About this RNA: Chemical mapping of a 177-nucleotide RNA with 2A3 and DMS. 2A3 adducts were read by reverse transcription with SuperScript II with manganese. The reactions ran in a buffer of 150 mM KOAc, 10 mM MgCl2 and 150 mM bicine (pH 8.5), at 24 C. For 2A3, 3,346 sequencing reads were counted.
RNA sequence: GGGAACGACUCGAGUAGAGUCGAAAAGAUAUGGAACACAGAGGGAGAAGUCACUCGGAAACGAGUGUCUUCUUUGAUCUCUUUGUUCCUAAGUCAAAACCCUGUUUGGCUUCGGCCAAACAGGGAACUGGUUACACAAGUUCGCUUGUGUAACCAGAAAAGAAACAACAACAACAAC
Reactivity to 2A3 in 0.01 (KOAc 150mM, MgCl2 10mM, bicine 150mM(pH8.5), 24C), signal-to-noise 1, nucleotides 027 to 126: g020a000u060a000u100g010g000a000a000c000a000c020a000g030a010g040g110g020a160g020a030a010g000u020c000a010c000u000c000g030g000a030a010a000c010g000a000g030u000g000u020c000u010u000c020u110u080u080g040a030u000c000u010c000u010u020u020g000u000u000c000c000u010a030a000g010u010c020a010a040a090a300c010c000c010u000g000u000u020u000g010g020c020u070u130c300g150g000c000c000a020a000a000c000a010g010g010g010a020a040
Reactivity to DMS in 0.01 (KOAc 150mM, MgCl2 10mM, bicine 150mM(pH8.5), 24C), signal-to-noise 1, nucleotides 027 to 126: g010a010u000a230u010g000g000a040a000c000a010c100a000g010a010g000g000g010a030g000a000a010g000u000c010a010c010u000c000g000g000a050a080a090c000g010a020g020u000g010u000c000u000u000c000u000u000u000g020a100u000c010u000c000u010u000u000g020u000u000c000c000u000a000a090g010u010c000a110a090a180a190c000c000c000u000g010u000u000u000g000g010c000u000u020c300g020g000c000c000a010a000a000c000a030g000g000g000a000a020